[RMDB]
RNA sequence: GGGAACGACUCGAGUAGAGUCGAAAACAAAUAUUGCCCGGCACGUUCGCCAUCGCUGCCAAAGGCGCAGAUCAGUUUGCCAUGGGCGCGGCAGCGCGCGAGCGCAUGGCUCAUCGCCUGAUCGAUCGUAAAUCCAGGCGUUCGCGCCUGGAUUUACAAAAGAAACAACAACAACAAC
Reactivity to 2A3 in 0.01 (KOAc 150mM, MgCl2 10mM, bicine 150mM(pH8.5), 24C), signal-to-noise 2, nucleotides 027 to 126: c000a040a080a000u300a220u220u140g030c010c010c020g030g070c060a090c070g010u100u020c000g000c070c040a050u050c100g210c090u040g000c010c000a020a230a180g040g010c010g000c060a010g000a160u000c010a010g140u220u160u170g150c110c070a120u120g030g020g000c040g000c000g130g010c050a010g050c000g000c000g060c060g050a010g000c000g000c030a000u020g020g000c000u020c130a110u150c050g070c020c080u010g000a050u050c050g000a000u060c110